This 177-nucleotide RNA was probed chemically with 2A3 and DMS. Conditions: 150 mM KOAc, 10 mM MgCl2 and 150 mM bicine (pH 8.5), 24 C. DMS (dimethyl sulfate) methylates the pairing face of unpaired adenines and cytosines.
[RMDB]
RNA sequence: GGGAACGACUCGAGUAGAGUCGAAAAUGCCCACCGGGUGUGAAGCUGGUCAAAGAUCCGGCGUUUUAUCCGGUUAAGCCCAUACGGACAGGCGGGGCAGCUGCCGAAAACAAAAAGAAAAGAAAAACGAGUAGGUGGAGUUCGCUCCAUCUACUCGAAAAGAAACAACAACAACAAC
Reactivity to 2A3 in 0.01 (KOAc 150mM, MgCl2 10mM, bicine 150mM(pH8.5), 24C), signal-to-noise 9, nucleotides 027 to 126: u050g010c000c000c000a010c000c010g020g000g010u060g030u050g100a050a020g000c000u010g000g040u080c120a240a110a060g110a080u090c000c000g010g010c000g010u090u120u070u070a010u000c000c000g000g000u000u020a010a010g000c000c000c000a080u120a150c020g020g050a030c020a030g030g020c070g010g000g010g020c000a020g010c020u020g000c000c010g080a070a030a020a030c120a020a070a040a030a010g220a100a100a020a010g150a030a100a020a010a010
Reactivity to DMS in 0.01 (KOAc 150mM, MgCl2 10mM, bicine 150mM(pH8.5), 24C), signal-to-noise 6, nucleotides 027 to 126: u020g000c000c000c010a200c000c000g000g000g030u020g010u020g010a020a080g010c000u000g000g000u010c100a170a140a150g010a070u060c010c000g000g000c010g010u000u010u010u020a030u000c000c000g020g010u000u030a090a070g010c000c000c010a120u010a170c040g000g000a070c020a100g000g010c030g010g000g000g020c020a070g010c070u020g000c000c000g010a220a060a090a060c240a060a090a060a070a090g020a080a080a100a100g010a090a090a030a130a090
For DMS the reverse transcriptase was MarathonRT. The 2A3 profile rests on 17,131 reads. The data come from the RNA Mapping Database (RMDB), library OK1LIB. Reactivities are given for positions 27 through 126.